[RMDB]
Source: RMDB library TTRDES, as collected in RNAgym. Structure probing data (DMS and 2A3) for a 177-nucleotide construct. DMS adducts were read by reverse transcription with MarathonRT. 2A3 adducts were read by reverse transcription with SuperScript II with manganese. Reactivities are given for positions 27 through 126.

RNA sequence: GGGAACGACUCGAGUAGAGUCGAAAAGAUAUGGAUCCUGUGUAGGGAGCUGCUGGGUCGGAAACGACCCAACAGCAUCGAUCUACACUGGGAUCCUAAGUCAAAACCGACGCCUUCGGGCGUCGGAUCCUUAAUAGCAGUUCGCUGCUAUUAAGGAAAAAGAAACAACAACAACAAC
Reactivity to DMS in 0.01 (KOAc 150mM, MgCl2 10mM, bicine 150mM(pH8.5), 24C), signal-to-noise 4, nucleotides 027 to 126: g000a040u000a300u000g010g000a010u000c000c010u000g030u000g010u010a010g000g000g010a060g030c000u000g020c030u000g010g000g020u000c000g010g000a080a040a150c000g000a010c000c000c010a010a000c000a010g010c000a190u000c190g010a090u010c010u000a000c000a000c010u010g030g010g000a010u000c000c000u000a010a080g000u000c030a100a070a130a170c000c000g010a020c010g030c000c000u000u020c290g030g010g040c010g020u000c000g000g000a000
Reactivity to 2A3 in 0.01 (KOAc 150mM, MgCl2 10mM, bicine 150mM(pH8.5), 24C), signal-to-noise 4, nucleotides 027 to 126: g020a010u040a030u140g010g000a000u000c000c010u010g000u010g000u010a010g040g090g160a210g010c000u010g000c000u010g000g000g000u020c020g020g010a060a030a040c000g000a000c030c010c000a010a000c000a000g020c000a010u210c050g030a180u010c010u010a000c000a000c030u040g020g020g000a000u000c010c000u000a030a000g020u000c020a000a020a100a230c020c000g000a010c000g020c020c010u120u150c300g160g000g020c010g010u010c000g000g000a000